This 207-nucleotide RNA was probed chemically with 2A3.
For 2A3, 432 sequencing reads were counted.
2A3 adducts were read by reverse transcription with SuperScript II with manganese.

RNA sequence: GGGAACGACUCGAGUAGAGUCGAAAACAGGCAUGAGUCACCAUGCCCAGCCUGAUGAUGAUUUUUUAGAGAAAUAAAUCCUUGAAUUUUCUAAUGUUGACAUACAGCAAGGUCUGACUGCAUAACUUGAUUGGGGCAAGGCCACCCCCUGUUGUCAUCAGUCAGUACGUUUCGACGUACUGACUGAAAAAGAAACAACAACAACAAC
Reactivity to 2A3 in 0.01 (KOAc 150mM, MgCl2 10mM, bicine 150mM(pH8.5), 24C), signal-to-noise 1, nucleotides 027 to 156: c000a000g010g000c000a010u000g000a020g060u040c020a010c050c020a020u080g000c000c000c000a010g040c000c030u020g020a040u040g040a000u000g070a120u040u000u070u000u120u240a110g070a000g070a060a070a000u140a060a110a000u020c010c000u020u080g070a100a130u060u040u240u130c040u090a000a220u060g040u060u070g030a040c000a030u250a020c010a050g070c030a050a090g000g000u000c100u040g100a070c020u060g010c060a120u040a250a160c000u060u140g050a100u020u190g070g000g000g050c020a100a000g020g090c010c000a020c040c000c000c010c000u000g000u000u000g000u010c040a060